[RMDB]
RNA sequence: GGGAACGACUCGAGUAGAGUCGAAAAGGACUACCCGUCAGGGUUUUGGCCAUACGGACAGCCGGGUCCACUGCCGGAAAGAAAACAAAACAAAACAAAAACAAAACAAAACAAAAACAAAAGAAAACAGUAUAUGCCCUUUCGAGGGCAUAUACUGAAAAGAAACAACAACAACAAC
Reactivity to 2A3 in 0.01 (KOAc 150mM, MgCl2 10mM, bicine 150mM(pH8.5), 24C), signal-to-noise 1, nucleotides 027 to 126: g000g070a000c000u000a030c000c000c000g000u050c070a110g110g000g000u000u040u080u190g030g040c030c000a070u090a050c040g020g050a020c030a000g000c000c000g050g000g020u000c060c000a010c020u000g000c000c000g000g000a070a010a000g170a030a030a000a000c100a010a010a000a000c080a000a000a000a080c120a100a060a100a000a060c140a000a140a000a000c080a030a160a000a000c090a040a180a000a020a000c040a030a110a020a000g070a110a130a040a030